[RMDB]
RNA sequence: GGGAACGACUCGAGUAGAGUCGAAAAGCCAGUGCGACCAGGGUUAUCUCAAAGCCUCAGAUGCUGGAUAAGUCGGGGGAGGCAGAAUCGCUUUGGGAUGACAUUCAGAAAGGCUGGAGUGAUUAUUGAGGUUAAUCGGUUUCGACCGAUUAACCUCAAAAGAAACAACAACAACAAC
Reactivity to 2A3 in 0.01 (KOAc 150mM, MgCl2 10mM, bicine 150mM(pH8.5), 24C), signal-to-noise 1, nucleotides 027 to 126: g020c010c000a010g090u080g060c000g000a060c000c000a020g000g000g000u000u000a000u010c010u000c000a010a010a010g000c000c000u070c060a030g000a120u100g040c010u010g000g160a250u130a300a000g040u010c060g080g000g000g000g000a000g070g000c000a030g080a040a070u300c090g060c000u000u000u010g000g000g010a000u010g000a010c030a090u120u120c010a010g110a050a080a000g080g010c060u000g030g000a080g030u130g050a070u090u170a120u040u130
The record gives the reactivity of an RNA of 177 nucleotides to 2A3. The 2A3 profile rests on 443 reads. It was measured as part of the RMDB library RFM100. Conditions: 150 mM KOAc, 10 mM MgCl2 and 150 mM bicine (pH 8.5), 24 C.